[RMDB]
RNA sequence: GGGAACGACUCGAGUAGAGUCGAAAAUACCACGCUUCGGCGUGGUAAAAAAAUCCUAAGUCGCUCGUGAGGCGUCCCGUGUGAGACAUGUCGGAAACGACAACAGCUCACGGACGCUCGAGCGAUAUGGAAAAAAAACGAAGUUUCGACUUCGUAAACUUUCUCUUGCUUUCGAGCAAGAGAAAGUAAAAGAAACAACAACAACAAC
Reactivity to 2A3 in 0.01 (KOAc 150mM, MgCl2 10mM, bicine 150mM(pH8.5), 24C), signal-to-noise 1, nucleotides 027 to 156: u040a000c000c000a000c020g000c010u090u100c300g040g000c000g020u000g030g010u000a000a000a000a000a000a020a070u050c030c000u040a150a060g040u000c000g000c000u020c020g150u170g290a140g090g030c000g000u030c040c050c050g240u140g020u020g040a050g040a080c120a150u020g000u010c000g000g100a110a090a110c040g040a020c000a050a030c030a030g020c000u000c000a000c040g030g000a000c000g000c010u020c020g010a000g000c000g000a010u000a000u090g000g030a060a000a000a000a040a000a000a000c010g030a010a060g000u000u050u300c300g060a040c000u000u000c020g000u040a160a020

Structure probing data (2A3) for a 207-nucleotide construct. For 2A3 the reverse transcriptase was SuperScript II with manganese. The reactions ran in a buffer of 150 mM KOAc, 10 mM MgCl2 and 150 mM bicine (pH 8.5), at 24 C.